[RMDB]
RNA sequence: GGGAACGACUCGAGUAGAGUCGAAAAGAUAUGGAUCCUGUAAUUAGCAACAGCUCGGAAACGAGACAUGCUAAUACAGGGAUCCUAAGUCAAAACACCCUGCAUCAGUUCGCUGAUGCAGGGUGAAUCGUAUGAUUACCUUCGGGUAAUCAUACGAAAAAGAAACAACAACAACAAC
Reactivity to 2A3 in 0.01 (KOAc 150mM, MgCl2 10mM, bicine 150mM(pH8.5), 24C), signal-to-noise 3, nucleotides 027 to 126: g000a000u070a040u180g020g000a000u010c000c000u010g030u040a300a300u040u010a000g020c010a000a160c080a200g090c010u010c000g000g050a110a070a060c010g010a000g040a040c010a060u070g000c000u000a000a000u010a020c020a050g060g070g010a000u030c000c000u000a090a030g040u020c030a000a030a080a110c010a020c000c000c020u000g000c000a000u000c010a000g120u120u240c300g010c200u010g000a010u000g000c000a000g020g000g010u010g010a000a000
Reactivity to DMS in 0.01 (KOAc 150mM, MgCl2 10mM, bicine 150mM(pH8.5), 24C), signal-to-noise 3, nucleotides 027 to 126: g000a020u010a300u000g010g010a010u000c000c000u010g010u000a130a110u000u000a000g020c000a040a090c260a200g000c000u000c000g010g000a080a070a190c020g000a000g000a030c130a190u000g010c010u000a010a010u000a000c020a050g020g030g000a010u000c000c000u000a010a080g020u010c030a100a070a120a190c000a000c000c000c010u000g010c000a000u000c010a000g020u010u010c240g010c000u000g000a010u000g000c000a000g010g000g020u000g000a010a040

This 177-nucleotide RNA was probed chemically with 2A3 and DMS. The data come from the RNA Mapping Database (RMDB), library TTRDEL. For DMS, 2,693 sequencing reads were counted. 2A3 adducts were read by reverse transcription with SuperScript II with manganese.